[RMDB]
Notes:
The record gives the reactivity of an RNA of 177 nucleotides to 2A3 and DMS. The data come from the RNA Mapping Database (RMDB), library OK2TRN. The reactions ran in a buffer of 150 mM KOAc, 10 mM MgCl2 and 150 mM bicine (pH 8.5), at 24 C. For 2A3 the reverse transcriptase was SuperScript II with manganese.
RNA sequence: GGGAACGACUCGAGUAGAGUCGAAAAGAGGAUACGAAGAGCUUCGUGCUUUCGAUAGCUUCGUAGCGGCGGCUACGUACCCUAGGGGAGCCGCCUCCCCUGCUAUCGGCGCGAGGGGAGUAUCCGAGGACCGUACGAUGUUCGCAUCGUACGGUCCAAAAGAAACAACAACAACAAC
Reactivity to 2A3 in 0.01 (KOAc 150mM, MgCl2 10mM, bicine 150mM(pH8.5), 24C), signal-to-noise 1, nucleotides 027 to 126: g170a020g020g010a000u030a010c010g090a110a110g000a010g040c010u020u010c010g030u000g030c040u120u200u210c010g000a000u000a010g000c000u050u050c050g030u040a010g000c030g190g010c050g030g010c020u020a010c030g040u090a050c110c000c000u010a010g020g030g010g030a000g090c080c040g100c040c000u050c000c010c010c000u020g030c000u010a000u000c020g020g000c020g000c040g010a020g000g020g000g010a020g000u000a000u000c000c010g000a040
Reactivity to DMS in 0.01 (KOAc 150mM, MgCl2 10mM, bicine 150mM(pH8.5), 24C), signal-to-noise 1, nucleotides 027 to 126: g000a300g000g000a000u000a000c000g000a080a150g010a290g000c000u000u000c020g010u000g000c000u000u020u070c050g000a000u000a020g020c030u000u000c020g000u000a040g000c030g000g000c150g000g030c020u010a060c050g000u000a110c130c080c120u010a090g020g010g000g040a030g010c100c130g020c190c000u010c000c010c010c020u010g000c000u000a010u010c000g000g010c010g000c070g000a010g000g010g030g000a070g010u000a000u000c000c000g000a150